[RMDB]
This 207-nucleotide RNA was probed chemically with 2A3 and DMS. It was measured as part of the RMDB library OK3TST. For 2A3 the reverse transcriptase was SuperScript II with manganese. The 2A3 profile rests on 3,206 reads. Values cover nucleotides 27 to 156.
RNA sequence: GGGAACGACUCGAGUAGAGUCGAAAAGCGGCAUGACUGUGUACGUUGAUCAAUACAUGUGUGGAGCUGACGGUAGGCCUGUUAUCUCUGGUGAGAUGCGUGACUACUUCGGCGAUUUAGAUGAUAUUGUUAUUGAUGGCAUUAUAUAUUCGCAUGCAAAUACAACCCGUUUCGACGGGUUGUAUUUAAAAGAAACAACAACAACAAC
Reactivity to 2A3 in 0.01 (KOAc 150mM, MgCl2 10mM, bicine 150mM(pH8.5), 24C), signal-to-noise 5, nucleotides 027 to 156: g070c070g020g000c040a020u050g040a150c080u080g000u020g000u110a060c030g050u040u060g040a060u040c040a040a040u040a040c040a100u050g080u040g030u070g100g040a020g030c020u010g010a020c020g030g010u010a000g000g030c020c040u020g040u070u150a060u020c040u010c040u180g170g050u260g050a020g010a010u030g000c020g020u020g010a060c020u010a010c000u070u090c040g010g000c020g030a030u030u060u080a040g000a020u040g060a070u030a040u100u050g040u090u040a020u050u060g050a040u030g020g000c020a010u100u060a070u030a030u020a060u110u140c050g000c070a020u100g060c020
Reactivity to DMS in 0.01 (KOAc 150mM, MgCl2 10mM, bicine 150mM(pH8.5), 24C), signal-to-noise 3, nucleotides 027 to 156: g030c060g030g040c050a060u000g000a100c080u000g010u000g020u000a040c110g020u010u000g000a110u010c040a050a070u010a030c030a070u000g020u000g030u010g010g020a300g010c060u010g000a060c160g030g020u000a030g010g000c020c010u000g020u010u010a040u000c020u000c010u010g040g020u000g010a070g010a060u000g000c060g010u010g000a060c030u000a050c050u000u000c040g020g010c000g000a120u000u000u000a070g010a080u010g020a070u000a090u000u000g010u000u000a060u000u000g010a080u000g020g000c010a070u000u000a120u000a130u000a110u000u000c050g040c070a070u000g020c070